Chemical mapping of a 177-nucleotide RNA with DMS and 2A3.
For 2A3, 2,629 sequencing reads were counted.
The reactions ran in a buffer of 150 mM KOAc, 10 mM MgCl2 and 150 mM bicine (pH 8.5), at 24 C.
The DMS profile rests on 1,299 reads.
DMS adducts were read by reverse transcription with MarathonRT.
For 2A3 the reverse transcriptase was SuperScript II with manganese.

RNA sequence: GGGAACGACUCGAGUAGAGUCGAAAACACCGUGCAAGCCGUCCGCACACGCAUCGCUCUCAUGCGGUCGAGGAGCUUGCCACUGGAAGGAGGGCGGGUCUUGCGCAGCAUCCGACAGGCGCACGCGGGGACUACGUACUUUCGAGUACGUAGUCCCAAAAGAAACAACAACAACAAC
Reactivity to DMS in 0.01 (KOAc 150mM, MgCl2 10mM, bicine 150mM(pH8.5), 24C), signal-to-noise 1, nucleotides 027 to 126: c130a080c030c000g060u010g000c000a090a000g000c010c130g030u020c040c030g090c030a200c120a060c100g000c000a000u000c070g000c000u070c100u000c170a130u040g000c120g000g000u000c090g000a150g000g020a160g000c010u000u020g010c110c020a010c060u040g000g000a110a240g000g060a110g000g000g010c170g000g000g000u000c000u010u040g000c010g000c000a040g020c080a090u130c060c000g000a090c220a080g010g000c160g000c000a080c300g000c170g000
Reactivity to 2A3 in 0.01 (KOAc 150mM, MgCl2 10mM, bicine 150mM(pH8.5), 24C), signal-to-noise 3, nucleotides 027 to 126: c050a010c020c030g020u020g000c020a010a030g000c020c010g140u020c000c000g030c020a080c000a010c120g030c010a060u050c090g020c070u050c040u040c080a050u130g000c040g040g000u030c010g030a090g030g040a040g000c000u010u020g000c010c000a000c010u100g000g030a090a020g050g050a070g020g000g030c050g050g000g010u020c040u060u110g000c020g000c000a010g070c000a080u030c020c050g040a030c000a050g030g020c000g000c030a030c050g080c050g010